[RMDB]
RNA sequence: GGGAACGACUCGAGUAGAGUCGAAAAGAUAUGGACCGACAUACUUCGCCGGUGAAAUACUCGGUGUCGGAAACGACACUCGAGGAGAAGUGUCGGUCCUAAGUCAAAACUAUCCUUCGGGAUAGAACAUGGACCAUUACUUCGGUAAUGGUCCAUGAAAAGAAACAACAACAACAAC
Reactivity to 2A3 in 0.01 (KOAc 150mM, MgCl2 10mM, bicine 150mM(pH8.5), 24C), signal-to-noise 1, nucleotides 027 to 126: g000a000u030a000u070g020g000a000c020c000g040a000c000a040u300a140c040u000u000c000g030c080c040g300g130u300g230a180a150a020u120a020c010u010c000g000g000u000g010u000c020g030g050a010a000a000c000g000a000c010a020c080u300c070g000a020g000g020a030g000a000a000g030u020g010u000c000g000g000u020c000c000u000a010a000g000u000c010a020a000a000a000c000u000a000u050c000c010u030u060c300g150g000g000a010u000a010g000a020a010
Reactivity to DMS in 0.01 (KOAc 150mM, MgCl2 10mM, bicine 150mM(pH8.5), 24C), signal-to-noise 1, nucleotides 027 to 126: g020a020u000a010u010g000g000a000c010c000g030a010c000a040u010a300c040u010u000c020g070c250c290g050g020u030g000a160a050a110u000a090c000u010c000g010g000u000g000u000c000g000g000a010a020a020c000g000a010c000a000c000u010c000g000a000g010g000a000g010a000a010g010u010g000u010c010g020g000u000c010c000u010a000a100g010u010c010a130a100a130a230c010u010a010u000c020c000u000u010c280g010g020g010a000u010a000g020a050a230